[RMDB]
RNA sequence: GGGAACGACUCGAGUAGAGUCGAAAAGAUACAAGUUGAAAAGACAUAAUUUGAGAUUUUUCAAAAUAGAUUAUUUUAGACAUCCUACUUUAAUCAUUUUUGAUGAAUCAAUACGGUAUUUUUGUCGCCUUUUCAUUAACUUCGGUUAAUGAAAAGGAAAAGAAACAACAACAACAAC
Reactivity to DMS in 0.01 (KOAc 150mM, MgCl2 10mM, bicine 150mM(pH8.5), 24C), signal-to-noise 2, nucleotides 027 to 126: g000a130u010a080c140a110a080g000u010u000g000a070a070a080a140g010a020c030a030u000a040a020u010u020u020g000a200g010a000u020u010u020u000u000c000a000a000a000a020u010a300g000a000u010u010a000u000u000u000u000a000g000a210c160a120u020c260c000u000a000c010u000u000u000a010a000u170c000a300u010u000u050u010u000g000a010u020g010a020a000u000c000a020a070u050a150c190g000g040u000a000u000u000u010u020u000g020u010c020g000
Reactivity to 2A3 in 0.01 (KOAc 150mM, MgCl2 10mM, bicine 150mM(pH8.5), 24C), signal-to-noise 5, nucleotides 027 to 126: g040a000u150a120c080a120a070g030u020u040g070a050a050a030a020g010a000c000a010u090a050a090u050u030u110g050a060g010a010u000u000u030u000u000c000a010a000a000a000u060a040g000a000u000u010a010u000u010u000u010a020g030a080c040a120u150c030c000u010a000c000u030u000u010a010a010u000c000a040u010u000u000u020u030g010a010u000g010a000a000u000c000a010a030u110a060c110g090g040u070a070u050u070u000u050u040g020u010c000g010